RNA sequence: GGGAACGACUCGAGUAGAGUCGAAAAGAUGAGAAUACGUGACUUGGUCAGAGGCGGAAAGUCACAAGCACGAACGAUCCAGUAGAGUAUCGAGCCGCCAACAGAUGCACGUUGUGAUCGUGCUAGAAGUAGUGCGGGUAUUCGUACCCGCACUACUAAAAGAAACAACAACAACAAC
Reactivity to DMS in 0.01 (KOAc 150mM, MgCl2 10mM, bicine 150mM(pH8.5), 24C), signal-to-noise 2, nucleotides 027 to 126: g110a080u000g050a160g000a110a080u050a020c110g000u000g010a010c000u000u000g000g020u000c060a130g010a230g030g000c000g000g000a040a110a020g010u000c000a010c020a010a060g030c030a010c040g020a100a070c170g000a100u000c030c010a090g000u090a000g020a190g000u000a010u000c010g000a050g000c000c000g000c030c010a100a100c100a200g000a100u000g000c100a040c180g000u010u000g020u000g040a040u080c030g000u080g000c020u000a090g020a230
Reactivity to 2A3 in 0.01 (KOAc 150mM, MgCl2 10mM, bicine 150mM(pH8.5), 24C), signal-to-noise 1, nucleotides 027 to 126: g060a100u170g000a010g050a100a000u000a090c060g000u000g050a130c020u000u040g000g000u070c100a080g000a120g180g050c020g050g000a140a000a000g030u000c080a000c000a090a010g020c000a000c030g060a100a000c100g030a080u000c060c010a070g000u050a000g040a010g090u100a040u050c000g000a020g070c020c000g010c000c000a000a020c060a000g020a060u110g040c000a000c000g040u140u030g300u150g010a050u130c000g000u000g000c000u000a030g110a070
The record gives the reactivity of an RNA of 177 nucleotides to DMS and 2A3. Values cover nucleotides 27 to 126. For DMS, 1,807 sequencing reads were counted. 2A3 adducts were read by reverse transcription with SuperScript II with manganese. For DMS the reverse transcriptase was MarathonRT.